An RNA of 207 nucleotides, treated with 2A3 and read out base by base. 2A3 adducts were read by reverse transcription with SuperScript II with manganese. The 2A3 profile rests on 2,213 reads.

RNA sequence: GGGAACGACUCGAGUAGAGUCGAAAAGGGGUCUGUCGUUGAAACCGUCGGGAGCGAAGAACAUACUGAAGCCUCCACGGUAUGGGAGCUCCGACGGUGGAGACAGACGGAGGCACCCAAACUGUUUGUGUAAUGGUUCGCCAUUACACAAACAGAAUCUUACCCUUAGCUUCGGCUAAGGGUAAGAAAAAGAAACAACAACAACAAC
Reactivity to 2A3 in 0.01 (KOAc 150mM, MgCl2 10mM, bicine 150mM(pH8.5), 24C), signal-to-noise 1, nucleotides 027 to 156: g080g020g030g000u000c010u010g010u020c020g160u290u080g000a000a000a010c000c020g010u010c050g080g050g040a020g050c000g090a220a020g000a000a020c000a000u010a000c000u000g010a150a020g040c000c000u010c020c020a020c000g040g000u000a000u020g010g000g000a000g000c000u000c000c000g000a000c000g000g000u000g000g000a000g000a000c010a010g000a000c000g000g000a000g000g010c010a010c000c010c020a060a080a110c000u000g000u030u010u020g010u000g000u010a000a000u000g030g070u050u060c240g040c100c000a000u000u010a000c020a000c000a000a000a000c000a000g000a000a020